This 177-nucleotide RNA was probed chemically with DMS and 2A3. The RNA was probed in 150 mM KOAc, 10 mM MgCl2 and 150 mM bicine (pH 8.5) at 24 C.

RNA sequence: GGGAACGACUCGAGUAGAGUCGAAAAGAAAUAAACUAGACUAAGUCGUGUCUAGGAACGACGAAAACGAUCCUAAGCGCUGGAUCGAAAAGCGCGAUCGAUAUACAGUUAUCGAGAAAACUGGAAAGGGUAUCUAUAUCUUCGGAUAUAGAUACCCAAAAGAAACAACAACAACAAC
Reactivity to DMS in 0.01 (KOAc 150mM, MgCl2 10mM, bicine 150mM(pH8.5), 24C), signal-to-noise 2, nucleotides 027 to 126: g000a100a030a120u020a100a050a080c020u000a030g000a040c020u030a110a150g020u030c160g010u000g010u000c020u000a000g020g030a090a070c090g010a070c060g000a080a070a080a170c040g000a060u000c000c020u000a130a150g000c080g000c150u000g000g030a110u000c070g010a030a010a080a050g040c010g010c030g020a090u090c010g010a040u000a030u010a090c130a110g010u000u010a000u010c040g000a050g000a060a030a020a030c030u000g000g010a090a080a160
Reactivity to 2A3 in 0.01 (KOAc 150mM, MgCl2 10mM, bicine 150mM(pH8.5), 24C), signal-to-noise 4, nucleotides 027 to 126: g040a000a040a050u280a030a080a000c020u010a000g010a010c020u050a090a110g220u140c060g060u110g000u020c010u000a010g060g020a010a090c030g120a020c050g050a040a070a010a040c050g040a030u010c000c020u120a110a110g040c110g030c130u030g010g050a050u190c070g030a060a050a000a000g040c040g020c000g040a030u080c020g020a000u020a020u020a070c030a000g010u010u020a020u020c030g020a020g070a120a030a020a020c030u020g080g040a050a060a080
The DMS profile rests on 2,962 reads. Values cover nucleotides 27 to 126.